[RMDB]
RNA sequence: GGGAACGACUCGAGUAGAGUCGAAAAGAUAUUAACGCGCGUGCUGUGUCUAACGCGAAUUACCCAGUUAUUUUCGACUUUACUCGAGUCGUUAUACCGUGAUAUGACACAGUUAUCCGCGAACGAACACAUACUGUUGUUUCGACAACAGUAUGUGAAAAGAAACAACAACAACAAC
Reactivity to DMS in 0.01 (KOAc 150mM, MgCl2 10mM, bicine 150mM(pH8.5), 24C), signal-to-noise 3, nucleotides 027 to 126: g000a160u020a060u010u010a050a110c170g020c000g000c060g000u000g000c050u000g020u000g010u010c030u010a080a040c040g000c010g000a080a050u000u000a090c070c040c080a140g010u000u010a070u000u000u010u000c000g000a010c000u000u000u000a000c010u000c010g010a000g010u000c000g000u000u000a010u010a090c090c040g010u000g020a100u010a040u010g000a060c030a030c020a030g000u000u000a040u000c050c020g010c060g000a060a100c100g010a090a140
Chemical mapping of a 177-nucleotide RNA with DMS. For DMS the reverse transcriptase was MarathonRT. In probing experiments dimethyl sulfate is read out at A N1 and C N3, which are open when not base-paired. Conditions: 150 mM KOAc, 10 mM MgCl2 and 150 mM bicine (pH 8.5), 24 C. Reactivities are given for positions 27 through 126.